RNA sequence: GGGAACGACUCGAGUAGAGUCGAAAAGGCCCAGAGCCUUAGCACAGCAUGGCUGACUUCUCUACCAUCCUUUCGGUGUUCCUGCUGAGGCUCGGUGCCCGCUUUGAUAAGGUCCUGGCUGGGCAGAAACGUGUGCAUGUUUCGACAUGCACACGUUAAAAGAAACAACAACAACAAC
Reactivity to DMS in 0.01 (KOAc 150mM, MgCl2 10mM, bicine 150mM(pH8.5), 24C), signal-to-noise 2, nucleotides 027 to 126: g010g020c010c020c030a150g010a020g010c000c000u000u000a010g000c010a160c190a050g010c080a060u010g010g010c040u000g010a110c130u010u000c060u000c040u010a090c010c050a080u000c110c070u010u000u010c070g010g000u000g000u000u000c030c010u000g020c010u000g010a040g000g010c020u000c010g020g000u000g010c010c000c020g000c070u000u000u000g010a120u020a110a080g020g000u010c020c060u010g010g000c040u010g030g020g020c060a060g000a070
Reactivity to 2A3 in 0.01 (KOAc 150mM, MgCl2 10mM, bicine 150mM(pH8.5), 24C), signal-to-noise 2, nucleotides 027 to 126: g070g020c010c000c020a000g000a000g020c000c000u000u000a000g000c020a010c040a140g080c020a130u170g100g000c010u010g050a140c040u060u050c040u020c030u030a010c000c010a070u160c060c040u130u250u110c070g020g020u100g010u030u030c010c010u010g000c050u000g010a010g000g010c000u030c020g000g020u010g010c000c000c000g010c030u070u030u080g050a070u110a200a130g120g000u100c010c000u000g000g000c030u080g000g040g000c010a010g120a000